[RMDB]
RNA sequence: GGGAACGACUCGAGUAGAGUCGAAAAGAGGAUUCAACGAGCUUCGUAGCAACGAUAGCAACGUAGCUUUUGCUACGACCCGAGCUAUCGAGGGCAGCUACGUCCCAUGCUCGAGGGGAGAAUCCGACAGGCAUACCACUUUCGAGUGGUAUGCCUGAAAAGAAACAACAACAACAAC
Reactivity to DMS in 0.01 (KOAc 150mM, MgCl2 10mM, bicine 150mM(pH8.5), 24C), signal-to-noise 2, nucleotides 027 to 126: g030a180g000g010a020u000u000c020a170a170c020g020a070g010c020u000u000c000g020u000a030g040c010a140a120c070g020a000u000a010g020c030a120a210c020g000u000a020g000c000u000u000u000u000g030c000u000a000c000g020a090c150c110c130g000a120g020c000u000a000u000c010g000a110g010g010g010c290a140g000c060u000a030c030g050u000c080c100c060a210u020g000c000u000c020g030a100g010g000g030g010a210g000a000a010u000c000c000g050a190
Reactivity to 2A3 in 0.01 (KOAc 150mM, MgCl2 10mM, bicine 150mM(pH8.5), 24C), signal-to-noise 2, nucleotides 027 to 126: g120a050g000g000a020u020u010c080a140a080c020g000a050g030c020u050u030c030g050u020a000g000c000a060a070c000g030a020u010a010g000c000a010a050c000g000u000a000g010c030u090u210u280u300g000c000u000a000c020g050a040c000c090c010g050a040g030c010u000a000u040c030g040a120g060g130g010c070a060g000c020u030a010c000g010u010c030c020c030a040u170g000c030u000c020g000a070g030g080g040g000a150g010a010a000u010c000c000g000a030
This 177-nucleotide RNA was probed chemically with DMS and 2A3. The 2A3 profile rests on 1,761 reads. The RNA was probed in 150 mM KOAc, 10 mM MgCl2 and 150 mM bicine (pH 8.5) at 24 C. The data come from the RNA Mapping Database (RMDB), library OK2TRN.